[RMDB]
RNA sequence: GGGAACGACUCGAGUAGAGUCGAAAAGGGCAACUGUCACACGCAUCGCCAUACCGAACGCGCGAUCCUCGACGCCGGAUUCGUGGUGGACAGCUCCCGGCGGGAGUGGGCAUUUCCCGCCUGGGUGCUACUCCACACUGUUCGCAGUGUGGAGUAGAAAAGAAACAACAACAACAAC
Reactivity to DMS in 0.01 (KOAc 150mM, MgCl2 10mM, bicine 150mM(pH8.5), 24C), signal-to-noise 8, nucleotides 027 to 126: g010g010g010c080a070a100c050u000g000u000c030a080c050a060c060g010c080a070u000c060g020c040c050a080u000a120c120c050g010a070a110c090g010c080g020c040g000a080u000c050c020u000c050g010a100c070g020c030c060g000g010a080u000u000c050g020u000g010g020u000g010g000a060c100a040g000c070u000c000c000c010g010g010c000g010g010g000a030g010u010g010g010g010c090a110u000u010u000c000c000c000g000c010c000u000g020g000g010u000g000
Reactivity to 2A3 in 0.01 (KOAc 150mM, MgCl2 10mM, bicine 150mM(pH8.5), 24C), signal-to-noise 7, nucleotides 027 to 126: g050g000g010c040a100a040c070u030g010u050c030a020c000a010c120g050c030a050u060c040g030c040c010a030u090a100c050c050g050a100a040c050g020c010g010c020g040a080u070c010c040u090c060g110a100c030g050c040c020g040g020a040u060u060c040g020u070g100g300u030g050g030a030c000a030g000c010u040c000c000c000g010g000c010g000g000g010a020g030u150g010g190g030c060a040u090u070u010c000c000c000g010c000c010u010g000g000g000u010g000